Background: Chemical mapping of a 177-nucleotide RNA with DMS and 2A3. It was measured as part of the RMDB library TTRDEL. Reactivities are given for positions 27 through 126. Conditions: 150 mM KOAc, 10 mM MgCl2 and 150 mM bicine (pH 8.5), 24 C.
RNA sequence: GGGAACGACUCGAGUAGAGUCGAAAAGAUAUGGAGUAGCGGGAGGACCCAGCGGAUAUAUCGGAAACGAUAUACGCUGCCAUCGAUCGCUACUCCUAAGUCAAACUGAACGCUUCGGCGUUCAGAAGUGUGUAUCUCCGUUCGCGGAGAUACACACAAAAGAAACAACAACAACAAC
Reactivity to DMS in 0.01 (KOAc 150mM, MgCl2 10mM, bicine 150mM(pH8.5), 24C), signal-to-noise 1, nucleotides 027 to 126: g010a000u010a290u000g000g010a020g000u000a000g010c000g000g010g020a240g000g010a200c300c300c050a100g040c000g010g000a130u000a010u000a010u000c010g000g000a030a060a120c010g000a000u000a010u000a040c040g010c000u000g010c130c100a080u030c030g000a250u000c000g010c010u000a020c000u000c000c000u030a030a040g000u000c030a050a060a130c010u010g000a000a000c010g000c010u000u000c160g010g000c000g000u000u000c000a000g000a040a090
Reactivity to 2A3 in 0.01 (KOAc 150mM, MgCl2 10mM, bicine 150mM(pH8.5), 24C), signal-to-noise 1, nucleotides 027 to 126: g020a030u010a030u080g000g000a010g010u000a000g000c020g000g020g010a060g050g050a140c150c140c050a010g000c020g020g020a050u030a000u000a000u100c000g010g020a010a020a010c010g010a010u000a000u000a030c080g010c040u040g010c050c090a260u300c040g040a020u070c000g010c020u000a000c000u030c000c000u030a000a000g000u010c010a010a060a120c020u010g000a010a010c000g000c020u040u100c300g150g000c010g000u010u000c010a010g000a050a020